[RMDB]
RNA sequence: GGGAACGACUCGAGUAGAGUCGAAAAGGAGGCCUUCUCUGGAACAACCCACGUAAAUUCUUUUAAGUCCACAAGUGGAACGGGUGGGAACUCUAAAUUGCGGUUAAUGCAAAGCAAUUGAACAGCACUACCUAUUAGUCUUCGGACUAAUAGGUAGAAAAGAAACAACAACAACAAC
Reactivity to DMS in 0.01 (KOAc 150mM, MgCl2 10mM, bicine 150mM(pH8.5), 24C), signal-to-noise 8, nucleotides 027 to 126: g000g010a050g010g020c070c050u030u020c000u000c010u000g010g020a110a080c200a100a110c040c010c020a070c090g020u030a050a070a100u020u010c070u020u020u020u010a080a150g000u010c020c010a050c080a090a110g010u010g020g000a050a080c110g020g000g010u010g010g000g000a070a090c040u000c030u000a060a040a020u000u000g000c010g000g000u010u020a050a080u040g020c090a050a070a140g010c020a020a010u000u000g000a070a100c170a080g000c160a260
Reactivity to 2A3 in 0.01 (KOAc 150mM, MgCl2 10mM, bicine 150mM(pH8.5), 24C), signal-to-noise 9, nucleotides 027 to 126: g050g000a010g020g040c030c040u120u080c020u030c020u050g060g020a050a050c050a040a060c010c010c000a020c000g050u080a060a110a170u130u060c090u020u180u050u130a070a040g040u030c030c010a050c040a170a150g060u060g060g020a100a060c040g060g050g010u030g010g020g000a040a020c000u010c010u040a070a070a030u030u030g000c020g040g050u070u120a090a050u190g080c040a050a030a030g010c000a010a030u020u060g030a090a020c020a040g060c030a020